[RMDB]
RNA sequence: GGGAACGACUCGAGUAGAGUCGAAAAUCCUGGGCCUGACUCCGGAAGGCCACCGGGUGGCCGUUCACGUUUACGGCACGCGGCAGUACUUUUACAUGAACAAGGAGGAGGUCGACAGGCACCUACAAGAGUAGUGUUCGUUCGCGAACACUACUCUAAAAGAAACAACAACAACAAC
Reactivity to 2A3 in 0.01 (KOAc 150mM, MgCl2 10mM, bicine 150mM(pH8.5), 24C), signal-to-noise 2, nucleotides 027 to 126: u060c000c000u000g000g000g010c000c000u040g070a200c000u000c020c000g000g040a010a000g000g000c000c000a000c000c000g030g030g040u030g050g200c000c000g000u090u080c020a010c220g100u130u060u180a020c000g000g000c040a000c000g300c000g080g000c040a040g000u000a090c000u020u090u090u030a130c050a240u250g110a260a050c020a040a010g000g000a020g000g030a000g030g000u000c000g030a030c040a040g010g000c000a030c060c010u030a060c040a110